[RMDB]
RNA sequence: GGGAACGACUCGAGUAGAGUCGAAAACACGAAUGUUGGCUAAUCCUGGUCGGACAUCAGGUGGUUAGUGCACUGGCAUAAGCCAGCUUGGCGCUAAUAGAUACUAAUCGUAGCAUAGCUGAAUAAAACUCACCAGUAGCUUCGGCUACUGGUGAGUAAAAGAAACAACAACAACAAC
Reactivity to 2A3 in 0.01 (KOAc 150mM, MgCl2 10mM, bicine 150mM(pH8.5), 24C), signal-to-noise 1, nucleotides 027 to 126: c000a000c020g130a100a100u300g010u140u100g030g000c020u000a050a070u030c030c000u000g080g000u050c020g130g000a050c020a000u000c000a000g000g010u020g000g110u070u030a000g000u000g000c000a000c000u030g000g000c100a090u070a300a000g000c000c000a000g000c010u170u150g170g000c000g000c000u000a000a000u000a030g000a000u200a020c010u020a070a050u000c030g000u000a000g000c030a070u060a000g000c010u020g040a090a020u080a110a110a000
Reactivity to DMS in 0.01 (KOAc 150mM, MgCl2 10mM, bicine 150mM(pH8.5), 24C), signal-to-noise 1, nucleotides 027 to 126: c090a120c070g000a090a090u090g080u000u000g000g120c030u000a090a040u000c010c000u010g150g000u000c020g010g000a300c150a020u000c030a070g000g000u000g030g000u000u000a000g060u010g000c020a230c000u000g000g010c030a250u040a050a150g080c040c000a000g000c160u000u080g000g000c000g020c000u000a010a000u000a160g000a140u060a020c100u090a020a140u060c200g020u000a000g000c040a130u000a010g120c040u010g000a000a090u040a100a050a160